[RMDB]
Annotation:
Chemical mapping of a 207-nucleotide RNA with 2A3.
RNA sequence: GGGAACGACUCGAGUAGAGUCGAAAAUUGCAUACAUUCCACAUAUGUCAUACACAUAAAUGGGUCCUUCAUAUACACCAAGGUAAGAGGGGUAGCACCUUCCCCCUCGGACACUUUUGCGGAUGUGAUCAUACAUUUUUUCUGAUGGAGCUUGCAGCGCUGCUCUUUCAUUCGUGAAAGAGCAGCGAAAAGAAACAACAACAACAAC
Reactivity to 2A3 in 0.01 (KOAc 150mM, MgCl2 10mM, bicine 150mM(pH8.5), 24C), signal-to-noise 2, nucleotides 027 to 156: u120u110g000c000a040u050a070c030a090u100u050c100c010a010c010a070u130a020u100g040u000c030a030u110a180c050a010c010a100u130a130a180a030u090g020g010g000u080c000c010u010u220c090a050u050a000u050a160c120a010c040c100a110a030g110g040u080a140a000g020a000g000g000g040g000u040a060g080c020a100c030c000u030u090c010c010c000c040c010u000c000g020g010a010c010a040c140u150u090u030u190g000c040g020g060a020u010g010u030g090a060u060c040a000u050a110c030a070u070u010u000u060u030u000c150u100g030a100u030g020g100a000g050c120u060u080g000c070a050g050